RNA sequence: GGGAACGACUCGAGUAGAGUCGAAAAGAUAUGGACCACGGUAAUACGAACUACUCGUAUGGUCGGAAACGACCAUCGAGCGUGCCAGUGGUCCUAAGUCAAACAUAACAUGUUCGCAUGUUAUGAACUUACUAGUACUGUUCGCAGUACUAGUAAGAAAAGAAACAACAACAACAAC
Reactivity to DMS in 0.01 (KOAc 150mM, MgCl2 10mM, bicine 150mM(pH8.5), 24C), signal-to-noise 9, nucleotides 027 to 126: g010a030u000a210u010g000g000a010c010c000a010c010g000g010u000a120a110u010a170c120g000a090a070c120u010a300c010u000c010g020u010a010u000g000g010u000c000g000g010a040a050a080c000g010a020c000c000a000u000c010g000a010g000c100g020u000g010c010c000a100g050u000g000g010u000c000c000u000a000a070g000u000c030a110a090a260c000a000u000a000a000c000a010u000g010u000u020c230g010c000a010u000g000u000u000a010u000g000a080a130
Reactivity to 2A3 in 0.01 (KOAc 150mM, MgCl2 10mM, bicine 150mM(pH8.5), 24C), signal-to-noise 9, nucleotides 027 to 126: g010a010u050a020u090g000g000a000c000c000a010c020g000g040u170a240a140u240a300c080g120a300a160c150u200a040c010u230c020g120u300a020u010g000g000u000c000g000g000a020a020a010c000g000a000c000c000a000u000c000g000a010g060c060g040u040g000c030c070a140g010u000g020g000u000c000c000u000a000a000g000u000c030a060a060a050c010a000u010a010a000c000a010u010g070u070u100c300g010c140a000u010g000u020u020a010u010g010a020a020
The record gives the reactivity of an RNA of 177 nucleotides to DMS and 2A3. DMS adducts were read by reverse transcription with MarathonRT. The RNA was probed in 150 mM KOAc, 10 mM MgCl2 and 150 mM bicine (pH 8.5) at 24 C. For DMS, 20,586 sequencing reads were counted.